Annotation
This 207-nucleotide RNA was probed chemically with 2A3. It was measured as part of the RMDB library RNAMAK. 2A3 adducts were read by reverse transcription with SuperScript II with manganese.
RNA sequence: GGGAACGACUCGAGUAGAGUCGAAAAGGGGUCUGGUCGAGGAUCACCUUGAUCGCGAGGAUCUAUACUGAAGCCUCCACGGUAUAGGGAGCGAUAAGGUGGGAGACCAGACGGAGGCACCCAAAGUACCGGUUUUAGUUCGCUAAAACCGGUACAACAAACGAUUCACGUUCGCGUGAAUCGUUUGAAAAGAAACAACAACAACAAC
Reactivity to 2A3 in 0.01 (KOAc 150mM, MgCl2 10mM, bicine 150mM(pH8.5), 24C), signal-to-noise 1, nucleotides 027 to 156: g030g010g040g040u000c000u000g010g010u020c010g070a210g050g020a010u020c000a000c000c010u000u020g230a060u020c020g000c020g030a290g030g000a010u000c000u000a000u000a000c000u040g070a100a010g000c000c010u010c000c000a010c000g030g000u000a000u000a010g000g010g000a000g010c000g010a000u000a010a000g000g000u000g000g020g000a010g000a000c000c000a000g000a000c000g010g000a000g000g000c000a030c000c000c010a030a120a010g000u000a000c000c010g000g010u000u000u000u000a020g010u060u020c290g010c140u010a000a000a000a000c000c000g010g000u000a000c000a000a010